[RMDB]
RNA sequence: GGGAACGACUCGAGUAGAGUCGAAAAACAUUGAACUAUCCAUGUGGCUGAGAGCCCUCACAGUCCAGGCACAACGACGCAAUUAUCAGGGGCGCGCUCUACCACUGAGCUAAUAGCCCGUCGUGUGGCAGGUGUCACAUUUCGAUGUGACACCUGCAAAAGAAACAACAACAACAAC
Reactivity to DMS in 0.01 (KOAc 150mM, MgCl2 10mM, bicine 150mM(pH8.5), 24C), signal-to-noise 1, nucleotides 027 to 126: a080c170a150u030u010g000a110a100c190u000a040u020c060c020a110u020g020u000g000g000c080u000g060a110g030a150g000c000c000c000u000c070a150c200a140g000u000c060c020a000g000g000c010a030c050a060a020c020g010a060c110g000c110a100a080u000u000a060u000c080a060g000g000g000g020c090g000c210g000c020u020c030u000a020c020c070a060c080u020g000a000g020c170u000a040a010u000a060g020c090c070c000g030u000c060g060u000g040u000g000